[RMDB]
RNA sequence: GGGAACGACUCGAGUAGAGUCGAAAAUCCGACGAGCUGAACGCUUUCGAAGGAAAGCUUGACCAGCUAAUCUUCUGCAACGCCAUUACGAGGACUUCCCUUAGAGGCUCAUGGCGAUAGGUCACCCAAAACUAUUUGAGGUUCGCCUCAAAUAGAAGAUUUCGUGGUUGUUCGCAACCACGAAAUCAAAAGAAACAACAACAACAAC
Reactivity to 2A3 in 0.01 (KOAc 150mM, MgCl2 10mM, bicine 150mM(pH8.5), 24C), signal-to-noise 1, nucleotides 027 to 156: u020c040c000g060a040c050g030a000g000c020u070g100a120a030c050g010c020u050u100u080c000g110a090a040g080g040a010a040a020g020c000u020u060g010a050c060c000a000g010c010u010a060a130u010c040u170u040c040u060g060c080a170a050c040g000c000c000a070u160u230a090c130g000a010g050g000a110c050u030u040c000c050c000u020u050a130g000a030g000g030c000u000c030a020u010g010g000c010g030a080u100a060g030g000u040c030a150c080c010c050a040a060a090a070c000u020a010u010u000u000g000a000g000g000u090u160c140g060c030c000u000c030a000a000a000u000a000g010a030a010